Chemical mapping of a 207-nucleotide RNA with DMS and 2A3. 2A3 is a SHAPE reagent: it acylates the 2'-hydroxyl of flexible nucleotides of all four kinds.
RNA sequence: GGGAACGACUCGAGUAGAGUCGAAAAGCCGAUGAAUUGCCGAGAAGCCUGGCUCGAAAUCGUCGACGCAUCGACGACGGUCCUGCCAUGAGACCGUAACGAGGACAUGUCGUCUCGAAUGGCGUCGUAUAACAUGAGUGGUUCGCCACUCAUGUAAAGGAGUACCAAAGUUCGCUUUGGUACUCCUAAAAGAAACAACAACAACAAC
Reactivity to DMS in 0.01 (KOAc 150mM, MgCl2 10mM, bicine 150mM(pH8.5), 24C), signal-to-noise 2, nucleotides 027 to 156: g060c050c040g000a070u010g020a180a110u000u000g010c040c040g030a140g000a110a170g010c050c060u010g010g010c000u000c040g000a040a040a070u000c040g030u010c010g030a040c150g030c070a260u000c000g000a030c000g000a030c010g000g030u000c020c020u020g000c060c120a080u000g000a150g010a070c030c090g000u000a050a070c060g000a110g040g020a090c010a110u000g010u000c000g010u010c000u010c020g030a120a140u000g000g020c000g020u000c010g000u000a040u000a110a080c010a030u010g010a030g020u000g010g000u000u000c300g040c040c000a000c000u030c000a000u000g020u020a030a150
Reactivity to 2A3 in 0.01 (KOAc 150mM, MgCl2 10mM, bicine 150mM(pH8.5), 24C), signal-to-noise 4, nucleotides 027 to 156: g060c040c000g010a050u060g050a080a240u150u120g030c030c050g020a020g050a170a040g050c050c100u090g040g030c020u020c040g050a090a080a040u140c060g050u040c000g010a010c010g000c040a030u040c010g000a010c000g000a000c000g000g020u020c000c010u060g130c040c030a170u150g020a060g060a150c090c050g060u070a040a040c070g040a020g030g010a000c040a070u160g020u020c010g050u000c030u010c080g060a130a070u080g080g020c000g010u010c000g000u080a060u060a100a010c000a000u000g000a010g010u000g050g020u070u080c200g030c070c010a010c000u000c000a000u000g000u000a020a030
Conditions: 150 mM KOAc, 10 mM MgCl2 and 150 mM bicine (pH 8.5), 24 C.
It was measured as part of the RMDB library M2RFPK.